Chemical mapping of a 177-nucleotide RNA with DMS and 2A3. 2A3 adducts were read by reverse transcription with SuperScript II with manganese. Conditions: 150 mM KOAc, 10 mM MgCl2 and 150 mM bicine (pH 8.5), 24 C. For DMS, 47,310 sequencing reads were counted.

RNA sequence: GGGAACGACUCGAGUAGAGUCGAAAACGGACUUCAAGCGAUUGCUGAAUAACACAGUAAUAGUCGUAGUUUCUACUGGGAAAUCUAACGGUAGUCGCUCUUGGUCUAUUAUGUGAAACUACGUCAGGGUACAGAAUCAUUUCGAUGGUUCUGUACCAAAAGAAACAACAACAACAAC
Reactivity to DMS in 0.01 (KOAc 150mM, MgCl2 10mM, bicine 150mM(pH8.5), 24C), signal-to-noise 9, nucleotides 027 to 126: c110g000g000a010c010u010u040c150a100a050g000c000g000a020u000u000g010c000u000g010a120a100u020a090a220c090a060c020a020g000u000a050a110u030a070g000u010c000g000u000a000g010u000u000u000c010u010a030c010u010g000g000g010a050a100a070u030c220u040a110a130c030g000g010u000a000g000u000c000g010c000u000c090u030u020g000g000u000c010u000a110u020u040a060u030g000u020g010a010a020a010c000u000a010c000g010u020c110a170g010
Reactivity to 2A3 in 0.01 (KOAc 150mM, MgCl2 10mM, bicine 150mM(pH8.5), 24C), signal-to-noise 9, nucleotides 027 to 126: c030g020g010a010c010u120u070c140a070a050g080c000g020a020u020u030g000c000u020g070a190a180u210a180a050c140a010c010a080g040u080a050a130u100a160g050u020c010g010u010a000g010u000u010u020c070u050a040c020u020g010g030g110a060a060a070u070c050u080a190a070c020g010g000u010a010g000u000c000g000c000u000c010u050u090g040g000u000c010u010a090u130u140a110u180g200u020g000a020a010a000c010u010a010c020g040u050c090a060g140